[RMDB]
RNA sequence: GGGAACGACUCGAGUAGAGUCGAAAAGCUCAACACCCUAAGCGGGUUGAUUAUGAGUAUGAGCGUGCAGGUACCGCCAAUAUCUUCAUGUUUAGCGAACCUUUAGCGGGGUGGCGACAAGCAACUGUACACAAGAGUAUUUCGAUACUCUUGUGUAAAAAGAAACAACAACAACAAC
Reactivity to DMS in 0.01 (KOAc 150mM, MgCl2 10mM, bicine 150mM(pH8.5), 24C), signal-to-noise 9, nucleotides 027 to 126: g020c030u010c020a080a220c050a040c010c000c010u010a100a150g030c180g000g010g000u000u000g020a110u010u010a090u000g000a070g010u010a070u000g010a060g010c020g030u000g010c050a050g010g010u000a040c070c050g010c120c110a070a260u000a020u000c030u000u000c040a040u000g010u000u000u000a080g010c060g000a060a050c030c020u010u010u010a100g020c080g010g000g010g020u000g010g010c110g010a060c120a060a080g000c090a050a090c120u000g010
Reactivity to 2A3 in 0.01 (KOAc 150mM, MgCl2 10mM, bicine 150mM(pH8.5), 24C), signal-to-noise 8, nucleotides 027 to 126: g020c010u010c020a000a030c010a030c020c010c010u080a190a040g080c090g010g000g000u020u060g030a060u050u260a100u200g080a020g050u120a130u130g040a020g020c020g000u030g000c020a020g050g000u050a050c020c040g050c050c030a050a030u040a030u060c020u050u030c020a030u050g030u030u050u060a040g020c030g030a020a040c020c000u050u130u130a040g000c040g000g020g000g000u010g020g020c030g050a070c030a040a010g020c010a030a060c050u120g030

An RNA of 177 nucleotides, treated with DMS and 2A3 and read out base by base. Conditions: 150 mM KOAc, 10 mM MgCl2 and 150 mM bicine (pH 8.5), 24 C. Source: RMDB library OK2TRN, as collected in RNAgym. 2A3 adducts were read by reverse transcription with SuperScript II with manganese.